[RMDB]
RNA sequence: GGGAACGACUCGAGUAGAGUCGAAAAUUGCUGUAUCUCCACGACCUAAAAUGGAACUUAGCACAUUGUAGGUGCUCAACAAAUAUUUGCCUAGUGAAUGAAUGAACAAAUACCAAGCAUUUGAUAUUUCUAAAGACACAAAAUUCCAAUCACAGUACUAAUGAUAAGCCUUCGGGCUUAUCAUUAGAAAAGAAACAACAACAACAAC
Reactivity to 2A3 in 0.01 (KOAc 150mM, MgCl2 10mM, bicine 150mM(pH8.5), 24C), signal-to-noise 1, nucleotides 027 to 156: u060u080g020c010u010g010u070a030u020c090u030c020c030a050c050g090a070c070c000u190a070a080a050a050u030g030g000a000a060c030u070u080a080g000c050a010c030a080u110u260g140u240a030g000g020u000g030c000u000c050a060a150c060a050a060a060u130a060u030u120u060g000c000c000u070a080g050u000g120a060a100u000g020a030a050u080g010a090a050c030a070a060a000u050a020c040c050a090a000g130c050a030u010u030u100g030a020u050a100u110u030u000c030u070a040a030a060g070a000c010a000c010a140a110a050a000u130u000c050c000a000a060u090c070a020c010a130g020u100a070
An RNA of 207 nucleotides, treated with 2A3 and read out base by base. The 2A3 profile rests on 373 reads. Reactivities are given for positions 27 through 156. The reactions ran in a buffer of 150 mM KOAc, 10 mM MgCl2 and 150 mM bicine (pH 8.5), at 24 C. For 2A3 the reverse transcriptase was SuperScript II with manganese.